[RMDB]
An RNA of 177 nucleotides, treated with 2A3 and DMS and read out base by base. For DMS the reverse transcriptase was MarathonRT. 2A3 adducts were read by reverse transcription with SuperScript II with manganese.

RNA sequence: GGGAACGACUCGAGUAGAGUCGAAAAGAUAUGGAGUACCUGAAUCGCAAGGAUACUGGAUCGGAAACGAUCCAGAUCUGAUGACCGUGAGUACUCCUAAGUCAAAAGUCUUGGUUCGCCAAGACAACCACUCAACAAGGUUCGCCUUGUUGAGUGGAAAAGAAACAACAACAACAAC
Reactivity to 2A3 in 0.01 (KOAc 150mM, MgCl2 10mM, bicine 150mM(pH8.5), 24C), signal-to-noise 4, nucleotides 027 to 126: g000a010u030a010u090g000g000a020g000u000a000c040c020u110g170a160a110u300c050g010c190a300a300g030g000a020u100a300c000u000g020g010a000u010c000g000g010a030a010a020c000g000a010u020c000c000a010g010a000u020c000u010g040a070u100g040a010c010c080g030u040g070a100g030u010a010c000u000c010c000u000a030a010g040u020c040a050a040a070a170g010u000c000u010u020g050g030u050u130c300g070c090c010a000a010g000a000c000a010a020
Reactivity to DMS in 0.01 (KOAc 150mM, MgCl2 10mM, bicine 150mM(pH8.5), 24C), signal-to-noise 3, nucleotides 027 to 126: g000a020u000a140u010g000g010a020g020u000a000c010c020u010g010a120a080u030c040g030c050a110a120g000g000a010u000a080c010u000g000g000a020u000c000g010g000a020a010a050c010g000a000u000c000c010a000g000a030u000c000u010g000a090u010g000a060c300c020g020u000g000a110g020u000a020c000u000c000c000u000a010a090g000u000c010a080a080a120a100g000u000c000u000u000g010g010u000u010c220g000c000c000a000a010g000a000c010a030a110